[RMDB]
RNA sequence: GGGAACGACUCGAGUAGAGUCGAAAACCUGGACUCCUCAGCUCUGGAGUCCUCCGACCCGUGAGGUCGAGGAUCCCCGCGCAGGGAGGCAGCCACCAGGAGAAAGCGGAGAAGUCACCUCCAGAGAGAAGUAUCUGCUUCGGCAGAUACAAAAGAAACAACAACAACAAC
Reactivity to 2A3 in 0.01 (KOAc 150mM, MgCl2 10mM, bicine 150mM(pH8.5), 24C), signal-to-noise 9, nucleotides 027 to 129: c000c000u020g020g030a060c000u020c030c000u060c060a040g040c030u020c060u110g000g000a010g000u000c000c000u020c020c060g000a010c000c000c020g260u210g110a210g010g020u010c010g000a020g010g020a040u060c060c030c000c010g000c010g000c030a040g070g070g010a020g010g000c020a000g060c040c030a060c010c010a010g010g030a030g070a020a070a010g070c060g010g000a050g010a120a050g090u110c050a060c050c010u030c020c020a010g020a000g010a000g020a300a000
Reactivity to DMS in 0.01 (KOAc 150mM, MgCl2 10mM, bicine 150mM(pH8.5), 24C), signal-to-noise 8, nucleotides 027 to 129: c000c000u010g000g030a170c030u010c000c010u040c040a070g030c040u020c060u000g010g010a060g020u000c000c000u030c040c080g030a000c010c010c030g030u020g030a120g030g030u000c000g010a050g000g040a060u040c010c010c000c020g030c240g000c000a120g000g010g010a010g010g040c150a090g000c060c050a040c000c050a020g000g000a110g010a060a060a100g030c100g040g020a060g020a110a120g000u040c080a070c090c020u000c050c000a010g030a090g020a070g000a140a140